[RMDB]
RNA sequence: GGGAACGACUCGAGUAGAGUCGAAAAGGGGAUGACAUGACAUUUGAGGACGUCAUCAAGGGCAUGGAAGUACUCGAAAGUCGUGAGGGCGGCUACGAGGGCGAUAUCUUAUUCGUGGGCACGGACGCCAAGAACGGUAUCGUUCGUGACUUGUCCGGACGGGUUGUCUGUUCGCAGACAACCCGUCAAAAGAAACAACAACAACAAC
Reactivity to 2A3 in 0.01 (KOAc 150mM, MgCl2 10mM, bicine 150mM(pH8.5), 24C), signal-to-noise 1, nucleotides 027 to 156: g120g020g000g000a010u040g060a050c010a000u060g000a050c020a100u090u170u170g020a010g020g150a040c040g090u030c010a000u040c040a000a090g060g010g000c020a000u050g040g080a180a150g030u030a040c000u020c000g060a090a040a000g050u020c050g000u020g000a070g010g080g060c080g010g000c060u060a050c110g010a080g010g020g020c040g070a020u050a020u100c020u090u050a070u250u050c160g170u110g010g000g010c030a000c030g060g000a000c030g000c000c060a090a000g020a050a030c070g000g000u110a020u210c020g000u040u000c000g000u000g050a080c010u150u240g010u020c040c000g040
Chemical mapping of a 207-nucleotide RNA with 2A3. The reactions ran in a buffer of 150 mM KOAc, 10 mM MgCl2 and 150 mM bicine (pH 8.5), at 24 C. The 2A3 profile rests on 449 reads.